[RMDB]
RNA sequence: GGGAACGACUCGAGUAGAGUCGAAAAAUGGUGACCUUCGGGUCACCAUGGUGCGAAGCUGCGUUAAUUUAAUAGCUACGCUUAAUAAAUUUAAUUAACGCAAUGGAGCCUGCUUCGGCAGGCUCAAUAUGUUACUAACGUUCGCGUUAGUAACAUAAAAAGAAACAACAACAACAAC
Reactivity to DMS in 0.01 (KOAc 150mM, MgCl2 10mM, bicine 150mM(pH8.5), 24C), signal-to-noise 5, nucleotides 027 to 126: a010u000g000g010u000g000a020c010c000u000u010c210g040g010g010u000c000a000c000c000a000u000g000g030u000g010c090g010a120a110g010c090u010g000c000g000u000u000a010a000u000u000u000a060a070u000a050g010c040u010a130c200g010c050u000u000a070a100u010a060a110a110u000u000u010a020a020u000u000a000a010c000g010c010a070a090u000g000g000a020g010c000c000u000g000c000u000u010c210g010g020c010a010g000g020c000u000c000a010a050
Reactivity to 2A3 in 0.01 (KOAc 150mM, MgCl2 10mM, bicine 150mM(pH8.5), 24C), signal-to-noise 3, nucleotides 027 to 126: a020u020g000g000u000g000a000c000c010u000u050c300g070g020g000u000c000a000c000c000a000u000g000g020u090g040c080g070a090a020g040c040u010g000c020g000u000u010a000a000u000u000u100a080a040u060a020g030c050u150a100c180g020c030u100u120a130a090u140a190a300a060u090u120u030a000a000u010u000a000a010c000g010c000a030a060u100g090g000a000g000c000c000u010g020c000u010u020c060g070g000c010a010g010g000c010u000c000a000a020